[RMDB]
This 177-nucleotide RNA was probed chemically with 2A3 and DMS.
DMS adducts were read by reverse transcription with MarathonRT.
Values cover nucleotides 27 to 126.
For 2A3, 2,254 sequencing reads were counted.
RNA sequence: GGGAACGACUCGAGUAGAGUCGAAAAGUCGCCUUUGGCCCGAUCCAGGUUUUCCCGCAGUAGGCGCGUUCCACCGAGGAUGUUCUGGCGUGGGUCAUACACAUCGGUGAUUCCAUACGCCUUGGCGUGCAUAGCUAGUCUUCGGACUAGCUAUGCAAAAAGAAACAACAACAACAAC
Reactivity to 2A3 in 0.01 (KOAc 150mM, MgCl2 10mM, bicine 150mM(pH8.5), 24C), signal-to-noise 2, nucleotides 027 to 126: g030u010c000g010c000c000u000u030u100g030g000c000c020c030g030a050u070c020c040a040g060g000u000u030u040u080c010c010c020g020c050a030g080u130a050g040g000c080g020c090g220u160u050c020c030a060c020c020g020a120g060g020a100u050g030u170u050c020u060g010g020c020g060u160g050g070g020u020c010a000u090a060c140a010c020a090u120c070g040g020u000g010a030u130u100c030c020a060u060a120c000g010c040c020u050u130g090g050c030g020
Reactivity to DMS in 0.01 (KOAc 150mM, MgCl2 10mM, bicine 150mM(pH8.5), 24C), signal-to-noise 4, nucleotides 027 to 126: g000u000c040g010c010c000u000u010u010g030g000c020c010c040g000a100u000c110c090a100g010g000u000u000u000u000c000c020c010g000c180a080g010u000a090g010g020c030g030c070g010u000u010c030c020a070c030c030g020a060g000g010a140u000g000u010u010c050u000g010g010c120g020u010g010g060g020u010c020a020u030a070c100a050c130a100u010c110g020g030u000g010a080u000u010c040c050a070u010a070c040g010c010c020u010u000g020g010c080g010